[RMDB]
RNA sequence: GGGAACGACUCGAGUAGAGUCGAAAAUCGGUGCAGCAUGGCAAAAUGGACACGAGAACGUGAUGCGUGAGGGCAAAUUCAUUCUGGUGAAGAUAAGCUAUCGCCUGGGGCCAUUGGGUUUCGUGAAGAGCAAAAUAGCUUUCGAGCUAUUUUGCUCAAAAGAAACAACAACAACAAC
Reactivity to DMS in 0.01 (KOAc 150mM, MgCl2 10mM, bicine 150mM(pH8.5), 24C), signal-to-noise 1, nucleotides 027 to 126: u000c090g070g000u000g040c040a040g010c040a080u010g010g000c070a040a080a070a100u010g010g000a220c040a020c050g010a060g000a120a080c030g050u000g000a160u000g020c110g050u000g000a120g000g030g000c050a020a070a150u000u000c060a060u020u000c130u000g010g030u000g030a060a090g000a120u010a030a230g010c040u020a090u000c060g050c010c030u020g060g030g000g020c020c040a110u000u000g010g000g000u000u000u000c050g000u000g010a130a090

Conditions: 150 mM KOAc, 10 mM MgCl2 and 150 mM bicine (pH 8.5), 24 C. Structure probing data (DMS) for a 177-nucleotide construct. It was measured as part of the RMDB library OK2TST.